[RMDB]
Notes
The record gives the reactivity of an RNA of 177 nucleotides to 2A3. For 2A3, 974 sequencing reads were counted. Values are in units of 0.01, from 0 to 300, in steps of 10. The RNA was probed in 150 mM KOAc, 10 mM MgCl2 and 150 mM bicine (pH 8.5) at 24 C.
RNA sequence: GGGAACGACUCGAGUAGAGUCGAAAAUGCGAGGUGAGUGUGUGCGCCCGCCCCUGCGCCCCUCCCCCUGCCUACAACUUGAUCUUAUUUGAUCGGGUAGUGGCCCCAGCCUGCCCGGCAGACCCGAGUAGAUUCUUUGCUUCGGCAAAGAAUCUACAAAAGAAACAACAACAACAAC
Reactivity to 2A3 in 0.01 (KOAc 150mM, MgCl2 10mM, bicine 150mM(pH8.5), 24C), signal-to-noise 1, nucleotides 027 to 126: u090g000c010g010a020g020g000u070g030a120g010u090g000u000g030u050g030c010g000c000c000c000g010c000c000c000c000u020g010c000g000c000c010c020c000u000c010c000c000c000c030u020g000c000c000u120a050c030a070a050c010u030u060g000a010u030c000u020u300a250u300u150u210g040a050u020c000g020g020g000u020a060g000u010g010g030c000c000c000c000a000g020c020c010u010g000c000c020c000g010g000c010a000g010a000c020c020c010g000a000